Source: RMDB library TTRDEL, as collected in RNAgym. This 177-nucleotide RNA was probed chemically with 2A3 and DMS. As a SHAPE reagent, 2A3 marks flexible, mostly unpaired nucleotides at the ribose 2'-OH. The RNA was probed in 150 mM KOAc, 10 mM MgCl2 and 150 mM bicine (pH 8.5) at 24 C.
[RMDB]
RNA sequence: GGGAACGACUCGAGUAGAGUCGAAAAGAUAUGGAUCUCAUCGAUCUAUCGUGAACGUUGAUCUCGGAAACGAGGGAGUUCGAUAGGGAGAGAUCCUAAGUCAAAGGGUGAGGUUCGCCUCACCCAAGCUGCACUACAUGUUCGCAUGUAGUGCAGCAAAAGAAACAACAACAACAAC
Reactivity to 2A3 in 0.01 (KOAc 150mM, MgCl2 10mM, bicine 150mM(pH8.5), 24C), signal-to-noise 2, nucleotides 027 to 126: g040a020u110a040u180g020g000a000u010c020u000c000a300u300c050g040a050u040c020u020a000u000c160g190u290g200a010a010c010g150u300u030g010a000u000c010u000c010g020g010a080a070a040c020g000a020g000g000g000a030g000u010u000c020g000a000u020a010g050g020g010a040g020a000g010a000u030c010c000u010a130a030g040u070c070a140a070a080g000g000g000u020g000a010g010g060u060u210c300g130c050c000u000c000a000c000c000c000a000a000
Reactivity to DMS in 0.01 (KOAc 150mM, MgCl2 10mM, bicine 150mM(pH8.5), 24C), signal-to-noise 2, nucleotides 027 to 126: g010a050u000a300u000g010g010a000u000c000u000c010a280u000c110g000a030u000c000u000a000u000c000g000u000g030a020a000c020g000u020u010g020a030u000c000u000c000g000g020a130a080a120c000g000a020g000g000g000a030g010u000u000c000g010a000u000a000g000g000g020a040g010a020g010a020u010c000c010u000a010a050g010u000c020a110a120a100g000g000g000u000g000a010g000g020u000u010c250g020c000c010u000c000a010c000c000c000a000a000